[RMDB]
The data come from the RNA Mapping Database (RMDB), library OK2TRN.
Chemical mapping of a 177-nucleotide RNA with DMS.
Reactivities are given for positions 27 through 126.
DMS adducts were read by reverse transcription with MarathonRT.
Conditions: 150 mM KOAc, 10 mM MgCl2 and 150 mM bicine (pH 8.5), 24 C.

RNA sequence: GGGAACGACUCGAGUAGAGUCGAAAAGUGAAAUUUGAAGACUGGUGGCAUAGACAACUUCAGCAGAAUAGAGUAGUCACACAUUACAGAUCCACAGGUGAGUUCUUGGAGUUUACAAGGGAGACAGUGGAAUCCCUUGAUUCGUCAAGGGAUUCCAAAAAGAAACAACAACAACAAC
Reactivity to DMS in 0.01 (KOAc 150mM, MgCl2 10mM, bicine 150mM(pH8.5), 24C), signal-to-noise 1, nucleotides 027 to 126: g020u000g010a090a080a110u000u020u000g010a110a110g010a120c040u020g010g030u010g000g000c040a030u000a090g000a030c070a070a030c060u000u000c060a070g000c110a060g010a090a060u000a020g000a100g040u030a070g010u000c030a070c040a050c110a070u010u000a130c140a050g040a050u000c000c040a050c070a070g000g050u000g000a090g000u000u000c020u030u000g010g000a080g000u000u000u010a100c090a070a080g000g040g010a040g000a070c070a110g020